This 207-nucleotide RNA was probed chemically with DMS and 2A3. It was measured as part of the RMDB library M2RFOK. The RNA was probed in 150 mM KOAc, 10 mM MgCl2 and 150 mM bicine (pH 8.5) at 24 C.

RNA sequence: GGGAACGACUCGAGUAGAGUCGAAAAGCUCUGGAAUUGAGGCCCCUCUAACAAUAAUCCAAAACUACUUCGCAGAGUAAUCUGCCGAAUCGUAGGAUGCCCAUUACUAUCCAUUUUUGGAGCAUCUAAAACUGUCAGUGCUUCGGCACUGACAGAACUAAGAUCUAACGUUCGCGUUAGAUCUUAGAAAAGAAACAACAACAACAAC
Reactivity to DMS in 0.01 (KOAc 150mM, MgCl2 10mM, bicine 150mM(pH8.5), 24C), signal-to-noise 2, nucleotides 027 to 156: g000c000u010c020u010g010g010a080a090u000u000g010a110g020g010c050c010c030c020u000c030u000a140a130c040a060a070u000a100a150u000c080c030a060a030a170a230c020u000a020c050u000u000c030g030c010a040g010a050g000u010a130a100u000c020u000g010c030c030g010a010a020u000c110g030u010a100g030g020a060u000g000c000c010c040a120u000u000a070c100u000a110u000c110c040a140u000u000u000u000u000g030g000a080g030c030a100u010c000u000a020a040a080a110c000u000g000u000c000a030g040u010g030c000u000u010c300g020g050c000a010c000u010g000a000c000a010g000a020a130
Reactivity to 2A3 in 0.01 (KOAc 150mM, MgCl2 10mM, bicine 150mM(pH8.5), 24C), signal-to-noise 4, nucleotides 027 to 156: g010c000u000c010u060g040g060a130a050u110u050g010a050g040g030c010c020c010c020u070c090u120a110a110c060a080a100u200a040a050u060c020c040a020a040a030a060c020u020a020c010u000u030c020g000c020a000g020a010g020u040a100a160u020c000u010g050c050c070g010a010a020u050c040g030u020a040g060g020a000u010g000c020c000c000a020u020u030a040c070u100a090u120c060c050a120u080u080u000u030u020g050g020a160g000c000a000u000c000u070a030a030a030a120c010u010g000u000c000a000g000u000g000c000u020u070c130g070g000c010a020c000u000g000a000c000a000g000a000a010